[RMDB]
RNA sequence: GGGAACGACUCGAGUAGAGUCGAAAAUUAGUUCUGGCCUGCCCUGUCCAAGCACAGAGUUGGAUCUCGAGGCCCAAAUGAAAAUAUGGGCUUCUUGAUUCCUAAAGUGGGGCGGACCGCAUGAGGCUGGCUUCACAGAGCAGUGAACGCUCCCGCUCAUGAUUAAAUCGUUCGCGAUUUAAUCAUGAAAAGAAACAACAACAACAAC
Reactivity to 2A3 in 0.01 (KOAc 150mM, MgCl2 10mM, bicine 150mM(pH8.5), 24C), signal-to-noise 2, nucleotides 027 to 156: u080u030a050g020u010u030c030u050g000g000c000c000u000g020c000c010c020u040g050u070c020c020a090a060g080c050a040c010a070g110a030g100u100u130g010g000a000u000c000u000c000g000a000g000g020c000c000c020a060a090a110u150g110a150a070a030a050u220a130u090g000g000g000c000u000u000c000u000u000g000a000u080u110c000c000u050a040a040a060g040u060g010g070g000g030c000g000g000a040c040c020g040c070a080u140g040a050g100g000c010u020g000g000c000u070u070c050a050c030a060g030a020g070c030a010g030u010g140a050a030c030g030c100u020c000c000c000g000c010u000